[RMDB]
RNA sequence: GGGAACGACUCGAGUAGAGUCGAAAAGCUGCGCGGGGUGGGCUACGUACUGCGGGAGCCUCGAUGAGUCUUGGUAGUUAAUCGGAUCGGCAGCCCGAGGAGAACGCGGCAAUGGCCAGACACCUUCAAUGGGGAGGAUGUUCGCAUCCUCCCCAUUAAAAGAAACAACAACAACAAC
Reactivity to DMS in 0.01 (KOAc 150mM, MgCl2 10mM, bicine 150mM(pH8.5), 24C), signal-to-noise 1, nucleotides 027 to 126: g050c050u010g000c080g050c080g000g010g000g020u010g020g010g020c000u010a050c140g000u000a130c070u000g030c060g010g000g000a200g000c010c010u000c030g010a080u000g000a180g010u000c030u000u050g020g030u000a070g000u010u000a130a110u000c070g000g010a090u000c060g010g000c060a140g030c080c000c010g000a030g010g010a160g010a070a070c050g010c040g000g010c000a080a090u000g000g010c010c010a170g000a300c140a090c050c020u000u000c220